Conditions: 150 mM KOAc, 10 mM MgCl2 and 150 mM bicine (pH 8.5), 24 C. An RNA of 177 nucleotides, treated with DMS and 2A3 and read out base by base. High 2A3 reactivity points to a flexible backbone, as in loops and unpaired stretches. Reactivities are rounded to 0.1 and cut off at 0 and 3.
[RMDB]
RNA sequence: GGGAACGACUCGAGUAGAGUCGAAAAAAAGAGUUGUGAUGUUAUCUGAUACAAUCUUCCUAAAUAAACACUCUGCAUUUCCUGCUUGCGGAAGCUGAGCUUUGUUCCGCGAGUCUCAUAUCUGCAAGUAAGAGGGUAUCUUCGGAUACCCUCUUACAAAAGAAACAACAACAACAAC
Reactivity to DMS in 0.01 (KOAc 150mM, MgCl2 10mM, bicine 150mM(pH8.5), 24C), signal-to-noise 4, nucleotides 027 to 126: a080a000a020g000a020g010u010u010g020u000g000a130u010g000u000u010a040u040c040u010g000a120u010a110c090a050a030u000c060u000u010c070c050u000a050a070a060u000a110a120a090c040a010c010u000c010u000g000c100a050u000u010u000c000c010u010g000c020u000u000g000c000g030g000a020a060g000c190u010g010a100g020c110u010u000u010g010u010u000c050c030g000c050g000a020g020u020c120u010c100a060u030a110u000c010u000g020c180a070a060
Reactivity to 2A3 in 0.01 (KOAc 150mM, MgCl2 10mM, bicine 150mM(pH8.5), 24C), signal-to-noise 3, nucleotides 027 to 126: a000a000a000g120a010g000u050u030g040u060g010a100u030g020u120u060a130u190c070u070g040a010u030a180c090a050a110u030c060u070u040c010c000u100a090a060a040u240a020a040a000c020a000c020u010c010u030g000c040a030u000u020u010c010c000u000g000c000u000u000g000c000g030g000a040a040g140c020u020g040a030g050c030u190u150u150g060u100u020c000c060g050c010g010a000g040u000c010u000c020a070u110a090u070c010u040g020c050a000a090
Source: RMDB libraries RFM100 and RFMREP, as collected in RNAgym.